Structure probing data (DMS and 2A3) for a 177-nucleotide construct. The data come from the RNA Mapping Database (RMDB), library OK2TST. DMS adducts were read by reverse transcription with MarathonRT. The reactions ran in a buffer of 150 mM KOAc, 10 mM MgCl2 and 150 mM bicine (pH 8.5), at 24 C. For 2A3, 1,474 sequencing reads were counted.
[RMDB]
RNA sequence: GGGAACGACUCGAGUAGAGUCGAAAAUAAACGCCCUUACCGCAGUACCGGUCGUCGCAUCCGGGUAUUUCGAGCAGACGAUCUCAUAGGUCGCCAGCACGAUCGGGUAAGAGCCAGGCUGGGUGGGUCGUGGAAUCUGAUUCGUCAGAUUCCACGAAAAAGAAACAACAACAACAAC
Reactivity to DMS in 0.01 (KOAc 150mM, MgCl2 10mM, bicine 150mM(pH8.5), 24C), signal-to-noise 2, nucleotides 027 to 126: u020a050a110a130c220g010c030c000c000u000u010a040c060c000g000c070a120g020u020a070c020c020g030g010u010c090g000u030c130g010c250a130u000c040c030g000g020g010u000a070u000u010u000c020g000a060g030c030a060g020a030c000g000a020u000c000u000c290a140u030a130g000g000u000c000g010c000c010a010g020c020a100c010g000a010u010c080g000g000g010u000a050a100g000a020g000c010c080a040g020g000c100u020g010g000g010u000g000g000g000
Reactivity to 2A3 in 0.01 (KOAc 150mM, MgCl2 10mM, bicine 150mM(pH8.5), 24C), signal-to-noise 1, nucleotides 027 to 126: u130a020a030a010c020g000c010c020c000u010u050a000c000c000g060c080a020g020u060a110c000c020g070g010u040c030g100u040c060g040c080a040u070c010c030g070g000g000u070a120u020u110u030c010g010a010g000c010a010g040a000c000g000a010u030c030u000c080a240u230a150g000g020u040c010g020c010c020a010g010c030a000c010g000a010u040c060g070g000g020u000a010a010g000a000g010c020c010a020g040g030c070u010g030g020g030u090g010g010g010